[RMDB]
RNA sequence: GGGAACGACUCGAGUAGAGUCGAAAAUGAAAUAAACGGCACCAAUAAGGACGUGCCGAACAAGCGUGACCUACCUACACGCAACAAGCAGUCAGGUAAGACUGCAAAGGAAAGGAAAACAAAAAAACAUUAUAAUGUUCUUCGGAACAUUAUAAUGAAAAGAAACAACAACAACAAC
Reactivity to 2A3 in 0.01 (KOAc 150mM, MgCl2 10mM, bicine 150mM(pH8.5), 24C), signal-to-noise 4, nucleotides 027 to 126: u060g010a010a020a040u190a020a070a020c000g010g000c010a000c030c040a050a190u240a220a080g100g030a030c060g010u010g000c000c000g030a010a010c010a070a020g000c000g000u010g010a070c020c020u050a080c030c000u020a030c030a000c010g000c010a010a030c020a060a020g020c000a000g000u010c000a010g110g170u100a140a030g010a000c000u010g010c000a000a010a010g040g020a120a050a040g050g010a030a110a030a020c070a030a120a020a020a000a000a010
Reactivity to DMS in 0.01 (KOAc 150mM, MgCl2 10mM, bicine 150mM(pH8.5), 24C), signal-to-noise 3, nucleotides 027 to 126: u000g010a070a100a040u000a090a080a110c030g010g000c000a010c000c100a090a150u010a120a110g000g000a160c160g010u000g000c010c000g000a060a010c180a080a120g000c010g010u000g000a070c100c040u000a110c020c010u000a110c020a000c010g000c000a120a090c150a050a080g000c010a030g010u020c010a080g020g000u010a090a110g000a010c000u000g000c000a020a030a080g010g010a060a060a080g010g000a080a030a050a050c070a010a030a060a060a030a090a080